[RMDB]
RNA sequence: GGGAACGACUCGAGUAGAGUCGAAAAGUCCUGGUGUCUGUGGUGGGUUUAUUACUGCCACUGGGUCGAUGCCACUGCUGGUUGAGAUUUAUUUCCCCGAGGGUAUCACCAGCCCAGUAGUCAGCACGCAUUAAAAAGUGUUCGCACUUUUUAAUGCAAAAGAAACAACAACAACAAC
Reactivity to DMS in 0.01 (KOAc 150mM, MgCl2 10mM, bicine 150mM(pH8.5), 24C), signal-to-noise 4, nucleotides 027 to 126: g010u000c020c020u020g010g020u000g010u010c060u000g010u000g020g020u000g000g030g010u010u010u020a100u040u010a120c000u000g000c050c010a070c000u010g010g010g020u000c090g010a060u000g010c000c020a090c070u010g030c060u000g010g000u010u010g010a090g000a070u010u000u010a110u010u000u010c020c040c000c040g000a170g010g000g000u010a020u000c010a070c080c180a180g000c020c010c010a030g010u000a080g000u000c030a030g000c080a100c190
Reactivity to 2A3 in 0.01 (KOAc 150mM, MgCl2 10mM, bicine 150mM(pH8.5), 24C), signal-to-noise 2, nucleotides 027 to 126: g060u000c010c020u010g030g000u040g040u040c090u030g040u060g040g030u040g000g000g060u090u220u080a200u120u150a090c020u030g010c010c010a020c010u000g000g010g010u080c040g000a000u030g020c010c010a300c200u100g040c030u100g040g060u180u190g070a090g030a150u070u160u160a130u020u140u080c000c000c010c020g020a070g020g000g000u010a010u010c010a010c050c020a010g000c000c000c000a030g000u060a040g110u090c020a000g000c050a010c060